[RMDB]
RNA sequence: GGGAACGACUCGAGUAGAGUCGAAAAAUAGUAGCGGACAAUCUCUUCAACCUCGCUCAGCGUAGUAGCGAGGCUAUCCGCGAGCGCGCCUACGAGAUCCGAGGCCGACAGGCAGUACCUGCUUGCAAAGACUAUUGUUUUUCGAAACAAUAGUCUUAAAAGAAACAACAACAACAAC
Reactivity to 2A3 in 0.01 (KOAc 150mM, MgCl2 10mM, bicine 150mM(pH8.5), 24C), signal-to-noise 5, nucleotides 027 to 126: a000u170a030g090u030a030g000c010g020g000a030c050a080a140u030c060u020c000u210u120c030a050a050c000c000u000c010g010c000u010c030a090g120c090g170u160a060g010u100a000g110c010g000a000g000g000c000u030a020u000c000c000g000c010g010a030g040c040g000c010g020c000c000u130a230c050g050a050g020a220u030c070c020g010a010g010g000c010c010g030a030c010a010g020g000c000a010g010u030a100c030c060u010g010c020u030u010g000c040a090
Reactivity to DMS in 0.01 (KOAc 150mM, MgCl2 10mM, bicine 150mM(pH8.5), 24C), signal-to-noise 9, nucleotides 027 to 126: a100u010a080g020u010a150g010c010g010g000a060c190a110a110u000c030u000c020u010u010c060a060a090c020c000u000c000g020c010u000c030a210g020c170g010u000a080g020u020a010g010c000g010a020g010g000c030u000a090u000c020c020g010c010g000a110g010c070g020c130g030c020c010u000a110c060g010a190g010a120u010c090c020g000a090g010g000c020c020g010a160c060a030g000g010c020a060g010u010a300c120c060u000g000c040u000u000g020c160a100